The record gives the reactivity of an RNA of 177 nucleotides to 2A3 and DMS. The RNA was probed in 150 mM KOAc, 10 mM MgCl2 and 150 mM bicine (pH 8.5) at 24 C. Reactivities are given for positions 27 through 126. The DMS profile rests on 17,510 reads. For DMS the reverse transcriptase was MarathonRT. For 2A3 the reverse transcriptase was SuperScript II with manganese.
RNA sequence: GGGAACGACUCGAGUAGAGUCGAAAAUUGUGGCUUUUAAAAGGCUUAGUGGCUCCCAGUUAGGAUUUAGUAUAUCUUUUGAUUUCAUGGUGCCUCAAGCAGAUCACCUGCCAUGGGUCAGGGGGUGCCAGUGUUAUGUAUUCGUACAUAACACUGGAAAAGAAACAACAACAACAAC
Reactivity to 2A3 in 0.01 (KOAc 150mM, MgCl2 10mM, bicine 150mM(pH8.5), 24C), signal-to-noise 6, nucleotides 027 to 126: u070u070g040u040g040g020c030u080u070u080u160a080a210a050a040g060g010c000u020u040a070g030u060g060g010c010u030c010c000c010a020g050u040u120a050g010g080a060u080u050u100a100g060u080a080u030a040u260c030u060u100u050u090g080a070u020u090u120c030a040u040g010g000u030g000c010c000u040c030a030a030g020c020a020g030a160u060c020a030c060c030u040g000c020c000a050u080g050g020g020u020c020a020g010g000g010g000g000u010g050
Reactivity to DMS in 0.01 (KOAc 150mM, MgCl2 10mM, bicine 150mM(pH8.5), 24C), signal-to-noise 8, nucleotides 027 to 126: u000u000g020u010g010g010c010u000u000u000u000a050a100a150a140g010g000c020u000u000a080g020u000g000g000c040u000c030c010c030a110g010u010u000a050g010g010a080u000u010u000a100g000u000a110u010a060u000c010u000u000u000u000g000a110u000u000u010c030a030u000g000g010u000g000c010c020u000c050a070a090g010c070a080g000a120u000c140a060c070c030u000g000c020c010a040u000g000g010g010u000c040a070g000g010g000g000g010u000g010